[RMDB]
RNA sequence: GGGAACGACUCGAGUAGAGUCGAAAACAGGUACCGAUCGAUGCGCGCGCAUCAUGCGUACGUACUGCGGAUCAGGCCGGCGCAUGGCCGGCCGUACCGGCGCUCUGCGCUAUGUGUCGUCUCAGGCCCUAUUAGUCUUGUUCGCAAGACUAAUAGGAAAAGAAACAACAACAACAAC
Reactivity to 2A3 in 0.01 (KOAc 150mM, MgCl2 10mM, bicine 150mM(pH8.5), 24C), signal-to-noise 7, nucleotides 027 to 126: c050a040g030g000u030a010c020c030g010a030u030c030g030a030u030g010c020g000c010g000c010g000c030a070u140c080a080u300g000c010g010u020a060c000g020u020a020c070u260g300c090g090g000a030u040c010a030g010g000c010c010g050g010c040g020c070a290u240g200g010c000c000g010g020c010c000g010u000a010c000c000g020g010c000g010c010u040c010u020g000c030g000c050u060a110u300g060u030g000u010c010g020u010c010u010c040a070g080g040c010
Reactivity to DMS in 0.01 (KOAc 150mM, MgCl2 10mM, bicine 150mM(pH8.5), 24C), signal-to-noise 7, nucleotides 027 to 126: c160a120g010g010u000a020c020c300g000a020u000c010g010a300u000g010c010g000c050g010c020g010c010a150u010c270a070u010g030c010g010u000a050c020g010u000a020c170u000g010c040g030g000a020u000c030a300g010g000c000c010g020g010c010g010c300a130u010g000g010c000c000g010g010c020c010g010u000a010c010c000g000g010c040g000c040u000c020u000g000c010g000c080u000a070u020g010u010g010u000c000g000u000c020u000c020a150g000g010c200
Chemical mapping of a 177-nucleotide RNA with 2A3 and DMS. Values cover nucleotides 27 to 126.